Notes: An RNA of 177 nucleotides, treated with 2A3 and DMS and read out base by base.

RNA sequence: GGGAACGACUCGAGUAGAGUCGAAAAUUACGGUGCAAACGGGUACUGCAACCCUGAAGUCAAUUAAAGACUCAAUUUCUUCUGCAGCACGUAAUAUCUAAUUACGUUGAUUAGAUCGCCGGAGCUACAUACCCUACGUCUUCGGACGUAGGGUAUGAAAAGAAACAACAACAACAAC
Reactivity to 2A3 in 0.01 (KOAc 150mM, MgCl2 10mM, bicine 150mM(pH8.5), 24C), signal-to-noise 2, nucleotides 027 to 126: u080u020a030c020g060g000u040g030c050a060a130a080c090g000g020g030u030a020c000u030g030c010a010a120c050c040c000u030g050a090a000g040u000c010a010a060u140u190a230a130a010g020a000c000u000c050a030a090u100u110u080c070u150u030c010u030g000c000a010g000c000a000c010g000u010a000a010u020a040u080c160u150a110a020u010u050a050c090g080u080u060g030a070u050u210a020g070a100u070c000g020c030c000g050g020a010g080c010u080a050
Reactivity to DMS in 0.01 (KOAc 150mM, MgCl2 10mM, bicine 150mM(pH8.5), 24C), signal-to-noise 3, nucleotides 027 to 126: u000u000a040c010g020g030u000g010c080a090a080a100c140g000g000g000u000a100c020u000g030c060a040a150c040c020c020u000g040a100a040g010u000c010a120a090u010u000a060a130a110g000a020c020u000c080a060a090u020u010u000c100u020u010c170u000g020c030a040g010c020a020c000g000u000a000a030u000a150u000c120u000a030a030u000u000a100c160g000u000u010g020a120u010u000a030g000a040u000c050g020c050c000g000g020a140g020c100u010a110

DMS adducts were read by reverse transcription with MarathonRT.